This 207-nucleotide RNA was probed chemically with 2A3. For 2A3 the reverse transcriptase was SuperScript II with manganese. The 2A3 profile rests on 1,367 reads.

RNA sequence: GGGAACGACUCGAGUAGAGUCGAAAAGAUCGGGUGUCCGCACUAAGUUCGGCAUCAAUAUGGUGACCUCCCGGGAGCGGGGGACCACCAGGUUGCCUAAGGAGGGGUGAACCGGCCCAGGUCGGAAACGGAGCAGGUCAAAACUCCCGUGCUGAUCGUAAAACUAAGAGUUCGCUCUUAGUUUUACAAAAGAAACAACAACAACAAC
Reactivity to 2A3 in 0.01 (KOAc 150mM, MgCl2 10mM, bicine 150mM(pH8.5), 24C), signal-to-noise 2, nucleotides 027 to 156: g020a070u070c050g000g040g040u050g110u030c010c020g020c030a060c070u120a090a090g090u120u110c040g020g000c010a000u020c030a030a170u210a100u110g000g000u010g000a050c010c000u050c000c010c000g030g050g060a090g130c060g000g000g010g000g030a040c130c000a000c000c000a000g000g040u010u000g010c000c000u040a030a050g060g010a030g000g050g010g000u050g040a050a060c040c020g020g000c010c000c020a020g020g000u000c010g000g000a090a060a050c020g010g000a060g040c080a020g000g080u090c000a020a030a030a180c010u030c000c000c010g000u030g040c020u050g000a070u070c030
About this RNA:
Conditions: 150 mM KOAc, 10 mM MgCl2 and 150 mM bicine (pH 8.5), 24 C. It was measured as part of the RMDB library ARCHII.